[RMDB]
RNA sequence: GGGAACGACUCGAGUAGAGUCGAAAAGGGGACAGAGUGAUGAACCAGCUGCUGACAGAGAUUGACGGGGUGGGGGCAAAGAAGAAUUUGUUCUUCAUUGGGGCAACGAACAGGCCCGAAUUGCUCGGGCCUAAGUAGGUUUCGACCUACUUAGGCCAAAAGAAACAACAACAACAAC
Reactivity to DMS in 0.01 (KOAc 150mM, MgCl2 10mM, bicine 150mM(pH8.5), 24C), signal-to-noise 4, nucleotides 027 to 126: g010g010g010g010a100c130a080g000a080g000u010g020a110u010g000a080a120c080c070a090g020c030u010g000c050u000g010a120c120a080g010a110g000a100u000u010g010a090c100g010g000g020g050u000g000g000g000g000g010c070a030a030a090g000a020a010g010a030a070u000u010u010g010u000u010c000u000u000c020a160u010u010g010g010g010g000c030a030a090c090g000a040a060c140a060g010g000c010c000c010g000a050a040u010u010g010c050u000c060g030
Reactivity to 2A3 in 0.01 (KOAc 150mM, MgCl2 10mM, bicine 150mM(pH8.5), 24C), signal-to-noise 2, nucleotides 027 to 126: g000g000g000g000a030c030a020g060a060g070u020g070a160u060g010a100a080c060c000a030g030c030u080g030c000u040g030a090c020a060g110a000g060a130u050u190g030a040c030g000g000g000g010u050g040g010g000g000g030c010a040a080a050g000a000a000g030a010a010u170u170u240g170u060u010c000u010u010c000a000u030u100g050g000g000g030c020a020a070c060g050a060a010c050a080g200g000c000c000c000g030a060a080u110u070g010c020u000c000g040
Structure probing data (DMS and 2A3) for a 177-nucleotide construct. For 2A3 the reverse transcriptase was SuperScript II with manganese. Reactivities are given for positions 27 through 126. Conditions: 150 mM KOAc, 10 mM MgCl2 and 150 mM bicine (pH 8.5), 24 C. The DMS profile rests on 3,455 reads.